[RMDB]
RNA sequence: GGGAACGACUCGAGUAGAGUCGAAAAGAUAUGGACUGCCUACCAGCAACAGCCCAAAGAGUUCACUAGAUUCGGAAACGAAUCUAGUGAACUCUUUGGGACAUGCUGUGUAGUGCAGUCCUAAGUCCAUGACAUAUUACUUCGGUAAUAUGUCAUGAAAAGAAACAACAACAACAAC
Reactivity to DMS in 0.01 (KOAc 150mM, MgCl2 10mM, bicine 150mM(pH8.5), 24C), signal-to-noise 4, nucleotides 027 to 126: g010a110u000a300u000g000g000a020c000u000g000c010c000u000a010c000c000a000g010c010a040a080c300a190g010c000c000c000a000a010a010g000a020g000u000u000c000a010c000u000a010g000a020u000u010c000g000g000a120a100a220c010g020a010a000u000c000u000a000g000u000g000a000a000c000u000c000u000u000u000g010g000g000a000c050a060u000g000c000u000g000u020g010u000a000g020u010g030c010a000g010u000c000c000u000a010a090g000u010c060
Chemical mapping of a 177-nucleotide RNA with DMS.
The DMS profile rests on 10,086 reads.
Values are in units of 0.01, from 0 to 300, in steps of 10.
The data come from the RNA Mapping Database (RMDB), library TTRINS.